[RMDB]
RNA sequence: GGGAACGACUCGAGUAGAGUCGAAAAGCGUCACUUUCUCUUUCUGUAGCAGGACGCUUGCGAAAACGAUGGUGGGGAUGUCCUCGUCUCUUACUACUCACCAGCCAGAAUCGAGGGACGCAAGCGAGCUGAUAGGACCUUUCGAGGUCCUAUCAGCAAAAGAAACAACAACAACAAC
Reactivity to 2A3 in 0.01 (KOAc 150mM, MgCl2 10mM, bicine 150mM(pH8.5), 24C), signal-to-noise 3, nucleotides 027 to 126: g020c010g040u020c030a030c080u050u100u020c000u010c000u010u110u030c060u060g100u110a040g070c080a070g070g050a030c000g000c000u000u000g000c020g050a100a010a030a040c070g040a070u070g000g020u040g000g010g000g040a080u180g110u090c000c040u030c040g030u000c000u020c000u070u130a050c030u030a070c010u010c010a040c020c010a010g110c050c010a060g030a040a110u070c020g020a080g030g030g010a000c010g000c020a000a000g020c020g070a020
Reactivity to DMS in 0.01 (KOAc 150mM, MgCl2 10mM, bicine 150mM(pH8.5), 24C), signal-to-noise 2, nucleotides 027 to 126: g000c000g000u000c050a090c080u000u000u020c010u000c000u000u020u010c030u030g030u000a100g060c260a150g010g010a140c000g000c000u000u010g010c040g000a000a110a140a110c130g000a060u000g000g010u020g000g050g000g000a130u040g000u000c060c120u000c130g000u000c030u000c090u110u020a030c110u000a210c020u040c000a010c010c000a080g060c090c080a300g010a110a120u020c070g000a010g000g000g070a300c000g000c000a030a060g070c020g020a200